An RNA of 207 nucleotides, treated with 2A3 and DMS and read out base by base. DMS (dimethyl sulfate) methylates the pairing face of unpaired adenines and cytosines.
RNA sequence: GGGAACGACUCGAGUAGAGUCGAAAAUUUGAAGAAAUUGUAUUUGAGAGAUAAUGAUUUGUAGAUGAUUAGUUCAUGAGUGAGACAUGGCACCCCUUUGCAUGUGCUAGGAUGUGUCUCGUCUUAUCCAUCAGAACUAGCCUGUCAUAUAGUAGGAUCUAUUGCUAUAUUUCGAUAUAGCAAUAGAAAAAGAAACAACAACAACAAC
Reactivity to 2A3 in 0.01 (KOAc 150mM, MgCl2 10mM, bicine 150mM(pH8.5), 24C), signal-to-noise 7, nucleotides 027 to 156: u080u040u080g030a020a030g060a030a120a040u100u090g030u070a110u090u160u120g070a090g000a000g020a030u130a160a090u140g070a030u020u080u130g070u080a070g020a100u080g010a050u070u030a000g010u000u010c020a030u050g020a010g060u010g000a010g000a010c010a020u050g000g000c010a000c000c040c010c030u040u140u110g030c070a100u250g170u280g120c010u010a010g000g010a060u120g010u000g020u010c000u000c040g010u000c000u000u030a050u030c030c010a020u070c060a020g010a010a010c000u000a000g020c000c010u050g040u110c050a030u100a020u030a140g110u040a050g020g080a030
Reactivity to DMS in 0.01 (KOAc 150mM, MgCl2 10mM, bicine 150mM(pH8.5), 24C), signal-to-noise 4, nucleotides 027 to 156: u000u000u000g010a120a190g010a070a080a080u000u000g010u010a110u000u000u010g000a170g010a150g010a110u000a060a100u000g000a090u000u000u000g020u000a100g020a080u010g010a080u010u000a020g030u000u000c010a110u000g010a030g010u000g010a030g010a030c010a100u000g010g000c000a020c020c070c000c000u000u020u000g020c020a210u000g010u000g020c020u010a030g000g020a040u000g020u000g000u000c010u000c070g000u000c000u000u000a010u000c010c010a010u010c100a160g030a020a030c010u000a030g000c030c020u010g020u000c040a110u000a090u000a090g000u000a090g030g010a190
For 2A3, 6,565 sequencing reads were counted. The reactions ran in a buffer of 150 mM KOAc, 10 mM MgCl2 and 150 mM bicine (pH 8.5), at 24 C. DMS adducts were read by reverse transcription with MarathonRT.